[RMDB]
Structure probing data (2A3 and DMS) for a 177-nucleotide construct. It was measured as part of the RMDB library OK2TST. The RNA was probed in 150 mM KOAc, 10 mM MgCl2 and 150 mM bicine (pH 8.5) at 24 C.

RNA sequence: GGGAACGACUCGAGUAGAGUCGAAAACGCGGCCUUUCAGAAUAAAGACUUCCAGGAAACGCUGCGGAUCACGUUCUAAUAGGGCUUUAACGGCAUGAAUACCGUAAAUAAUUUCGCUCAUGAUGCACUCCUGAUACUCGUUCGCGAGUAUCAGGAGAAAAGAAACAACAACAACAAC
Reactivity to 2A3 in 0.01 (KOAc 150mM, MgCl2 10mM, bicine 150mM(pH8.5), 24C), signal-to-noise 2, nucleotides 027 to 126: c030g000c000g010g020c010c050u020u050u030c030a020g070a120a080u190a250a220a030g130a170c070u090u020c040c070a080g110g090a030a030a000c020g000c020u030g000c000g010g000a010u100c000a010c100g030u060u000c000u020a080a050u080a220g070g000g000c030u040u030u050a070a020c000g010g000c020a050u100g050a040a010u140a060c000c010g000u010a000a070a140u220a020a040u110u110u090c040g000c000u000c010a060u090g110a020u110g020c020a020
Reactivity to DMS in 0.01 (KOAc 150mM, MgCl2 10mM, bicine 150mM(pH8.5), 24C), signal-to-noise 1, nucleotides 027 to 126: c020g010c070g010g020c070c120u000u000u000c030a120g020a020a070u010a060a100a060g000a200c250u010u000c030c180a170g020g000a040a000a020c230g040c000u000g020c000g000g010a040u010c020a090c100g000u000u000c050u000a030a060u000a170g000g020g000c060u000u000u040a070a080c040g010g000c000a110u000g040a090a140u020a070c000c000g000u020a040a010a110u000a030a110u050u000u020c090g010c050u000c040a070u030g010a090u000g010c070a220
The 2A3 profile rests on 972 reads.